Chemical mapping of a 177-nucleotide RNA with 2A3 and DMS. The RNA was probed in 150 mM KOAc, 10 mM MgCl2 and 150 mM bicine (pH 8.5) at 24 C. As a SHAPE reagent, 2A3 marks flexible, mostly unpaired nucleotides at the ribose 2'-OH.
[RMDB]
RNA sequence: GGGAACGACUCGAGUAGAGUCGAAAAUGCUGGAAAGGGAUUGUAGAGAUGCAUUCCCCAGUGUCGCAAAUUAGAUUGUAUAUGGUUCGGGCUUCUCACGUGCGACAGAUACUGGUGAGGCGAAGAAGGGUUUAUAUAACUUCGGUUAUAUAAACCCAAAAGAAACAACAACAACAAC
Reactivity to 2A3 in 0.01 (KOAc 150mM, MgCl2 10mM, bicine 150mM(pH8.5), 24C), signal-to-noise 3, nucleotides 027 to 126: u050g030c000u070g030g030a130a060a050g060g020g000a040u030u050g090u070a040g010a000g010a110u090g000c000a000u030u020c000c000c010c000a030g010u020g000u100c050g020c070a020a050a040u100u060a090g100a250u150u160g050u200a090u060a070u290g130g040u010u030c030g080g000g000c030u050u020c000u030c010a030c050g030u040g010c020g030a020c020a000g070a020u170a130c040u010g040g000u090g030a000g050g000c050g000a040a000g120a100a060
Reactivity to DMS in 0.01 (KOAc 150mM, MgCl2 10mM, bicine 150mM(pH8.5), 24C), signal-to-noise 3, nucleotides 027 to 126: u040g000c000u000g020g000a080a080a120g000g000g000a060u010u010g050u000a020g000a150g000a130u030g010c020a070u000u010c010c000c010c040a060g000u010g010u010c040g000c040a060a130a100u020u030a060g000a190u010u000g020u030a060u050a050u020g020g000u000u000c030g010g000g000c090u030u010c010u000c040a090c130g000u000g000c010g000a060c040a050g000a110u020a080c050u000g000g030u010g020a160g000g020c040g010a050a110g000a070a140